[RMDB]
RNA sequence: GGGAACGACUCGAGUAGAGUCGAAAAAAGCUCUGCCACUGAUGGGGAUGAGGAGGAUAUCUUGAGCCACAGCUCCAGCCAGGUCAGCGCCGUCCCAUCUGACCCUGCCAUGGACCUGAAUGAUGGGGAUAAACAAUGCGUUCGCGCAUUGUUUAUCAAAAGAAACAACAACAACAAC
Reactivity to DMS in 0.01 (KOAc 150mM, MgCl2 10mM, bicine 150mM(pH8.5), 24C), signal-to-noise 3, nucleotides 027 to 126: a060a030g000c020u000c010u000g010c100c040a130c050u000g010a150u000g000g000g000g010a060u000g010a060g000g000a090g000g010a110u020a070u020c100u000u010g010a140g010c020c040a080c050a050g000c060u010c020c020a050g000c100c020a060g000g000u000c020a030g000c210g000c030c060g000u000c010c010c010a100u010c070u000g000a100c050c010c030u010g000c070c040a050u000g000g020a090c070c040u000g020a100a060u000g000a060u000g010g000g000
Reactivity to 2A3 in 0.01 (KOAc 150mM, MgCl2 10mM, bicine 150mM(pH8.5), 24C), signal-to-noise 2, nucleotides 027 to 126: a020a010g030c010u000c010u050g000c000c010a210c080u030g020a050u040g010g030g010g020a050u060g050a070g090g010a040g040g030a050u050a040u220c050u060u120g070a050g070c020c010a030c020a040g010c000u030c010c000a010g110c080c000a030g050g010u030c010a010g040c000g000c040c010g000u060c030c000c000a010u000c030u020g070a090c000c010c010u020g000c030c010a070u100g040g040a060c000c060u040g060a100a060u100g040a030u040g000g070g040